[RMDB]
RNA sequence: GGGAACGACUCGAGUAGAGUCGAAAAGGUGGGACUUUUCCCUUGAGUUCAAGCGGUUGAACUCAGAGGGGAGUGUGAUCCUGGUACCGCCGUAGAAACUGGAUUACGACGUCUACCCGGGAUUCAAACUCGGCCCCUCUCAGAGGUGACUCUGAACCCAACAAUAUCCGUUCGCGGAUAUUGUUGGAAAAGAAACAACAACAACAAC
Reactivity to 2A3 in 0.01 (KOAc 150mM, MgCl2 10mM, bicine 150mM(pH8.5), 24C), signal-to-noise 2, nucleotides 027 to 156: g080g010u120g040g030g100a160c050u090u020u050u080c020c000c000u000u030g000a000g000u000u030c020a040a050g110c130g180g160u020u010g020a000a000c000u000c020a000g010a000g030g010g000g010a020g010u090g030u040g020a010u000c000c010u010g000g040u020a030c000c010g000c000c010g000u030a020g140a100a250a090c190u130g110g020a200u180u040a030c030g010a010c030g040u010c040u050a040c040c020c030g040g000g000a040u140u130c070a130a100a120c040u000c000g210g020c000c000c010c020u000c000u000c000a030g000a010g010g020u120g020a030c020u000c000u010g040a070a070c010